[RMDB]
This 177-nucleotide RNA was probed chemically with DMS and 2A3. DMS adducts were read by reverse transcription with MarathonRT. For DMS, 4,640 sequencing reads were counted. For 2A3, 5,473 sequencing reads were counted. The data come from the RNA Mapping Database (RMDB), library RFMREP.
RNA sequence: GGGAACGACUCGAGUAGAGUCGAAAAGGGCAAUGGAGCAGAUACCAUUUGAAAAACGGGCGAGUUCGAAAAGCCAGAGGAGUAGAGGAAAUAAACCUACUUCAAACACUUCGGUGUUUGAAGUAGGGAUAGUAAGCUUCUUCGGAAGCUUACUAUCAAAAGAAACAACAACAACAAC
Reactivity to DMS in 0.01 (KOAc 150mM, MgCl2 10mM, bicine 150mM(pH8.5), 24C), signal-to-noise 4, nucleotides 027 to 126: g000g000g020c080a050a050u010g020g010a070g010c030a090g010a120u010a040c030c020a070u010u010u000g010a040a050a030a060a060c070g010g000g000c030g000a100g020u000u010c050g000a080a080a100a100g010c030c020a050g000a040g000g010a050g000u010a070g010a070g010g010a060a070a080u000a030a050a280c000c000u000a000c000u000u000c000a010a000a000c000a010c000u000u020c180g030g000u000g000u000u010u000g000a000a000g010u000a000g000g000
Reactivity to 2A3 in 0.01 (KOAc 150mM, MgCl2 10mM, bicine 150mM(pH8.5), 24C), signal-to-noise 4, nucleotides 027 to 126: g040g010g000c020a010a040u060g000g000a030g020c050a030g030a040u090a070c000c000a060u090u150u260g100a080a050a000a000a000c030g010g010g010c050g020a030g060u070u070c030g030a060a030a020a020g020c010c010a010g010a020g050g020a020g000u050a040g010a030g010g070a060a110a040u130a040a070a010c000c000u000a000c000u000u000c000a000a000a000c000a000c010u040u070c150g100g000u010g000u000u000u000g000a000a000g000u000a000g000g000